[RMDB]
RNA sequence: GGGAACGACUCGAGUAGAGUCGAAAAUGAUCGAGAGAUCUAACUAUGUACGCGAGUCAAGUGCACAGACUCGAGCGAAAGCUCGGUCGAAAGACCGCGUACAUGGGGCGGCAAGUGUACAGUCGAAACCGGAGUAGCAUUUCGAUGCUACUCCGGUAAAAGAAACAACAACAACAAC
Reactivity to DMS in 0.01 (KOAc 150mM, MgCl2 10mM, bicine 150mM(pH8.5), 24C), signal-to-noise 1, nucleotides 027 to 126: u020g000a000u000c000g040a220g000a160g000a000u000c010u030a070a200c000u000a000u000g000u000a000c000g030c000g010a070g000u000c000a040a070g000u000g020c060a060c070a260g010a000c000u000c010g020a000g000c000g000a060a050a220g000c000u010c010g010g000u000c010g000a090a060a130g000a020c010c000g010c010g010u000a000c000a000u000g000g000g000g020c090g040g040c050a020a080g070u000g010u010a060c020a300g000u000c020g000a090a170

This 177-nucleotide RNA was probed chemically with DMS. For DMS, 912 sequencing reads were counted. Values cover nucleotides 27 to 126. The RNA was probed in 150 mM KOAc, 10 mM MgCl2 and 150 mM bicine (pH 8.5) at 24 C.